[RMDB]
RNA sequence: GGGAACGACUCGAGUAGAGUCGAAAAAUAAUAGAUUUUAGUGGCUAUGCUUAUGGGAUAGAUUAAACUUGCCAUGAUCUGAAGAGGGAGGGUUUUUUCAUGUCCUCCUCCUAUAUGAAAUGGCUGAGGUAAUUAUUGGAUUCGUCCAAUAAUUACCAAAAGAAACAACAACAACAAC
Reactivity to 2A3 in 0.01 (KOAc 150mM, MgCl2 10mM, bicine 150mM(pH8.5), 24C), signal-to-noise 8, nucleotides 027 to 126: a000u230a020a050u110a060g100a140u070u090u060u070a070g030u040g080g000c020u030a010u080g040c000u120u080a080u190g060g010g040a030u060a070g040a040u080u160a100a110a060c040u040u060g000c010c000a010u030g090a240u040c010u020g020a050a020g030a040g030g030g010a020g010g030g040u030u060u010u030u050u160c110a100u170g020u020c000c000u000c000c000u000c000c010u080a100u000a010u160g020a010a050a000u000g000g010c000u020g030a030
Reactivity to DMS in 0.01 (KOAc 150mM, MgCl2 10mM, bicine 150mM(pH8.5), 24C), signal-to-noise 6, nucleotides 027 to 126: a070u030a060a070u010a110g010a090u010u000u010u000a090g020u010g000g010c010u010a020u010g010c040u000u020a060u020g020g000g000a070u010a040g010a110u010u010a050a050a060c120u020u010g000c030c010a020u010g000a120u000c010u000g000a190a110g000a090g000g000g010a020g010g000g010u000u020u030u020u050u040c190a070u030g010u000c000c000u000c000c000u010c030c010u000a100u030a110u010g000a020a240a020u000g000g000c010u000g010a110
Annotation
Structure probing data (2A3 and DMS) for a 177-nucleotide construct. It was measured as part of the RMDB libraries RFM100 and RFMREP. Values are in units of 0.01, from 0 to 300, in steps of 10.